[RMDB]
RNA sequence: GGGAACGACUCGAGUAGAGUCGAAAAAUUAUGAGGGCAAGGGUCACCUGCUGGCUAACUUCUUACACCCAGUCCAAAAGUUUAAAGAACCUGGGCCUGCUGGAUGCGAGCCCCUGUUACAUUAGGACUGUUAUAGGCAAUUCGUUGCCUAUAACAGAAAAGAAACAACAACAACAAC
Reactivity to 2A3 in 0.01 (KOAc 150mM, MgCl2 10mM, bicine 150mM(pH8.5), 24C), signal-to-noise 3, nucleotides 027 to 126: a000u300u170a120u160g010a070g100g020g000c050a040a040g080g000g010u060c020a040c060c010u050g010c010u000g020g000c020u030a060a080c020u040u050c010u030u030a010c040a020c020c020c020a050g050u040c010c000a050a110a030a060g030u060u100u150a150a210a090g040a040a020c010c070u040g010g000g000c000c010u010g010c000u080g170g070a110u150g050c020g020a040g010c000c000c000c000u020g030u080u060a070c050a100u090u170a030g060g010a010
Reactivity to DMS in 0.01 (KOAc 150mM, MgCl2 10mM, bicine 150mM(pH8.5), 24C), signal-to-noise 3, nucleotides 027 to 126: a110u000u010a050u010g010a130g010g000g010c050a080a070g000g000g020u000c100a080c030c060u000g000c020u010g010g020c050u000a070a100c100u010u000c030u000u010a090c170a110c040c030c030a100g000u000c040c050a010a110a110a120g010u000u010u010a050a100a150g000a050a070c090c100u010g000g010g010c040c030u000g000c000u000g020g010a080u010g000c160g000a130g000c020c000c000c040u000g010u000u000a080c080a100u000u010a090g030g000a140